This 207-nucleotide RNA was probed chemically with 2A3 and DMS.
The reactions ran in a buffer of 150 mM KOAc, 10 mM MgCl2 and 150 mM bicine (pH 8.5), at 24 C.
[RMDB]
RNA sequence: GGGAACGACUCGAGUAGAGUCGAAAAACAACAGAGUUCUUGAUAUGGCCAGUUGUUAUUUUGACAUAAGAGGCAUUGUAGAUAGAGGACAUUCUUUUAAACCAUACAGCGGCACAGCUUUUAAUUGUUUAGCUCCUAAAGGAGCAUCUAAUAACACCAUAUGGUUCUAUUUCGAUAGAACCAUAUGAAAAGAAACAACAACAACAAC
Reactivity to 2A3 in 0.01 (KOAc 150mM, MgCl2 10mM, bicine 150mM(pH8.5), 24C), signal-to-noise 3, nucleotides 027 to 156: a000c050a000a020c050a010g130a020g080u090u130c040u080u050g080a090u110a090u160g070g000c050c060a050g000u010u010g040u020u050a090u050u100u100u160g000a010c010a020u120a040a070g010a030g040g000c010a020u040u090g010u010a020g010a170u070a050g050a020g030g020a020c010a030u060u040c030u000u160u010u100a060a160a060c010c000a030u050a120c030a050g040c000g090g000c100a020c020a020g060c000u040u080u080u220a120a110u080u000g020u010u060u040a040g000c000u040c010c030u190a140a110a040g020g000a000g010c000a000u000c010u010a030a140u180a110a020c060a020c170
Reactivity to DMS in 0.01 (KOAc 150mM, MgCl2 10mM, bicine 150mM(pH8.5), 24C), signal-to-noise 2, nucleotides 027 to 156: a130c030a060a130c050a090g010a210g020u000u000c040u000u010g000a130u000a050u010g020g040c030c040a150g000u000u010g000u010u000a070u000u000u010u000g020a100c040a110u010a070a100g010a110g020g020c040a080u010u010g050u000a090g010a170u010a090g010a130g000g010a060c070a090u000u000c040u010u010u000u010a020a120a110c030c000a110u000a090c100a110g000c060g010g030c030a040c070a060g030c040u020u010u000u020a070a200u000u000g010u000u000u000a090g060c010u000c000c000u000a050a110a160g010g010a030g080c000a050u000c010u010a060a070u000a020a110c020a050c100
The data come from the RNA Mapping Database (RMDB), library OK3TST.